[RMDB]
Chemical mapping of a 177-nucleotide RNA with DMS and 2A3. The RNA was probed in 150 mM KOAc, 10 mM MgCl2 and 150 mM bicine (pH 8.5) at 24 C. The data come from the RNA Mapping Database (RMDB), library OK2TST. The DMS profile rests on 1,517 reads.
RNA sequence: GGGAACGACUCGAGUAGAGUCGAAAACGCGGUGGUAUUGGCGUUCGCACUGAUCCAUCUCUACAUUCUCACGAGAUCCAUAAAGAGUGCGGAGGAGGGAUGAUGAGAUACGAGAUACGAUCUGUGGCUUUCAGCCACGGUUCGCCGUGGCUGAAAGAAAAGAAACAACAACAACAAC
Reactivity to DMS in 0.01 (KOAc 150mM, MgCl2 10mM, bicine 150mM(pH8.5), 24C), signal-to-noise 2, nucleotides 027 to 126: c110g040c070g000g000u010g030g020u000a060u000u010g000g010c030g020u010u010c050g020c020a070c030u010g020a040u010c000c060a070u000c010u000c010u000a170c170a140u000u000c030u000c040a110c240g000a160g010a000u000c060c040a080u000a110a120a110g010a050g000u010g000c010g020g040a020g030g010a110g000g010g000a040u000g000a110u020g000a060g000a050u010a060c180g010a080g000a070u000a120c140g000a020u000c000u020g040u000g010g000
Reactivity to 2A3 in 0.01 (KOAc 150mM, MgCl2 10mM, bicine 150mM(pH8.5), 24C), signal-to-noise 2, nucleotides 027 to 126: c040g030c010g030g080u090g050g040u160a140u130u170g120g000c030g040u070u070c040g000c010a020c030u050g000a000u000c040c020a050u000c020u000c000u040a020c010a170u140u040c050u050c040a010c030g080a130g040a110u020c060c030a060u150a180a120a030g090a030g060u090g010c020g020g000a000g020g000a070g070g000g010a060u090g050a090u060g000a060g000a030u090a070c000g000a010g000a060u030a030c010g050a090u000c010u090g020u040g080g050